Source: RMDB library TTRDES, as collected in RNAgym. Chemical mapping of a 177-nucleotide RNA with DMS and 2A3. For DMS, 951 sequencing reads were counted. For 2A3, 2,041 sequencing reads were counted.
RNA sequence: GGGAACGACUCGAGUAGAGUCGAAAAGAUAUGGACCAUCAUGUGUAGCGGUAAUACUUCGCUCGGAAACGAGCGAAGUGCCAGCUACCAUGAGUGGUCCUAAGUCAAAAGGCGGCUUCGGCCGCCACAGUUAUGUGGACUUCGGUCCACAUAACUGAAAAGAAACAACAACAACAAC
Reactivity to DMS in 0.01 (KOAc 150mM, MgCl2 10mM, bicine 150mM(pH8.5), 24C), signal-to-noise 1, nucleotides 027 to 126: g030a160u010a300u000g000g000a030c000c000a050u000c000a000u000g030u010g020u010a000g020c000g000g040u000a090a110u010a070c010u000u000c000g070c000u010c000g000g000a080a180a180c000g000a010g000c000g000a000a000g040u010g020c060c010a100g020c000u000a050c030c000a020u000g000a030g010u020g010g000u000c000c000u000a000a190g010u040c040a110a090a200a180g000g010c000g000g010c000u000u000c300g020g030c000c000g030c000c010a010
Reactivity to 2A3 in 0.01 (KOAc 150mM, MgCl2 10mM, bicine 150mM(pH8.5), 24C), signal-to-noise 1, nucleotides 027 to 126: g020a030u100a040u270g010g010a020c010c010a010u090c000a010u030g300u000g000u160a000g020c000g020g040u130a300a200u130a300c000u000u000c000g000c020u000c000g020g090a140a110a050c030g010a000g000c030g000a000a000g000u000g000c000c010a030g000c000u000a000c060c000a000u000g000a020g050u080g000g030u020c000c000u010a000a070g040u020c020a070a080a050a100g000g000c030g040g000c020u100u170c300g200g000c000c000g000c010c010a010
Notes:
The reactions ran in a buffer of 150 mM KOAc, 10 mM MgCl2 and 150 mM bicine (pH 8.5), at 24 C.